[RMDB]
RNA sequence: GGGAACGACUCGAGUAGAGUCGAAAAACACAUUUCCUCCUUCCACUCACUCCACAAGGCUCUUUUCUUCCAGCUCAGCAUGCCCAGUGGUUUUGAACAGGGAGGCAGUGUGGGGUAGUGGAAAGAAUGCGAUCUAAGAGUUCGCUCUUAGAUCGCAAAAAGAAACAACAACAACAAC
Reactivity to 2A3 in 0.01 (KOAc 150mM, MgCl2 10mM, bicine 150mM(pH8.5), 24C), signal-to-noise 1, nucleotides 027 to 126: a000c110a040c060a120u040u000u000c000c000u040c010c000u050u000c000c000a000c000u120c020a030c000u000c000c010a020c010a010a010g020g000c010u020c060u200u140u090u000c020u060u020c000c020a080g010c000u010c040a000g000c010a060u150g120c040c000c020a040g030u200g000g010u000u000u080u150g000a080a010c000a030g000g070g020a030g000g120c020a020g050u060g000u000g010g000g000g000u000a000g000u030g010g000a000a000a000g030a030a040